[RMDB]
RNA sequence: GGGAACGACUCGAGUAGAGUCGAAAAUGGGGAUGCCUGGAUUGAUUGCCCUUUCUCUGCAUAAUAUUUAUAUCCAUGGAUACCAAACGUUGAAGCGAGAAAACAAGCAAUAAAUACGUCAGCAGCCAAUACGUCAAAGGCAUUUCGACUGACAGAAUCAGGAGGAUAUCUUCGGAUAUCCUCCUGAAAAAGAAACAACAACAACAAC
Reactivity to DMS in 0.01 (KOAc 150mM, MgCl2 10mM, bicine 150mM(pH8.5), 24C), signal-to-noise 1, nucleotides 027 to 156: u000g000g040g030g020a000u000g030c040c000u010g010g010a180u010u010g010a070u000u010g110c020c030c060u010u000u000c000u000c010u000g080c010a300u000a060a010u000a100u000u000u000a070u010a030u000c010c010a210u000g060g020a030u000a010c020c050a010a020a040c040g010u000u000g080a040a150g010c020g010a030g010a030a030a000a020c070a080a110g000c020a010a010u000a060a130a130u000a080c050g040u000c000a150g000c000a110g000c100c020a020a040u010a040c130g000u000c010a100a140a160g000g050c000a080u010u000u000c040g000a140c010u010g010a030c010a040g020a110a110
Reactivity to 2A3 in 0.01 (KOAc 150mM, MgCl2 10mM, bicine 150mM(pH8.5), 24C), signal-to-noise 2, nucleotides 027 to 156: u070g040g000g010g000a000u010g060c000c000u010g040g070a100u010u120g060a070u120u020g000c000c010c010u000u030u000c020u040c050u100g030c020a030u070a150a020u110a280u050u170u150a090u020a010u060c030c030a040u300g100g000a010u050a060c070c050a100a050a000c050g040u070u080g000a100a000g020c000g000a010g010a020a020a020a110c050a070a000g010c020a000a000u040a060a080a040u090a070c080g030u050c030a050g010c030a010g050c080c040a040a010u150a120c070g000u050c080a070a040a000g040g030c000a000u000u050u130c140g030a120c030u080g020a020c000a040g120a080a070
The data come from the RNA Mapping Database (RMDB), library OK3TST. An RNA of 207 nucleotides, treated with DMS and 2A3 and read out base by base. The RNA was probed in 150 mM KOAc, 10 mM MgCl2 and 150 mM bicine (pH 8.5) at 24 C. DMS adducts were read by reverse transcription with MarathonRT.